Record summary:
This 177-nucleotide RNA was probed chemically with 2A3 and DMS. The reactions ran in a buffer of 150 mM KOAc, 10 mM MgCl2 and 150 mM bicine (pH 8.5), at 24 C. 2A3 adducts were read by reverse transcription with SuperScript II with manganese.
RNA sequence: GGGAACGACUCGAGUAGAGUCGAAAAUGCUGGAGCGUUAAGAAGUGAGAAUGCCGGUAUGAGUAGCGCAAGAUAAGUGAGAAUCUUAUCCACCGUAAGACUAAGGUUUCCAGGGGAAGGCUCGUCCUCGAUAUGAUACAUUCGUGUAUCAUAUCGAAAAAGAAACAACAACAACAAC
Reactivity to 2A3 in 0.01 (KOAc 150mM, MgCl2 10mM, bicine 150mM(pH8.5), 24C), signal-to-noise 9, nucleotides 027 to 126: u100g000c010u030g040g020a060g010c030g030u040u050a120a040g070a100a050g080u060g080a080g050a110a050u080g020c020c010g020g010u090a070u100g050a040g040u050a020g000c020g000c040a040a050g010a020u020a020a010g010u010g040a050g040a060a030u050c000u010u010a010u010c010c020a040c020c020g050u050a070a020g030a040c040u050a050a070g070g000u030u060u020c010c020a020g000g000g010g010a040a040g050g000c010u020c040g040u050c010c020
Reactivity to DMS in 0.01 (KOAc 150mM, MgCl2 10mM, bicine 150mM(pH8.5), 24C), signal-to-noise 9, nucleotides 027 to 126: u010g020c030u000g010g010a070g020c060g020u000u010a080a110g010a110a100g020u010g010a110g010a090a070u000g010c040c020g010g010u000a050u010g010a080g020u000a090g020c040g010c120a110a120g000a020u000a010a020g010u000g010a190g000a210a170u010c010u010u000a020u000c010c060a140c190c030g010u000a050a080g000a070c080u010a080a100g010g010u000u000u000c030c030a100g000g000g010g000a070a060g000g010c060u000c070g000u000c040c050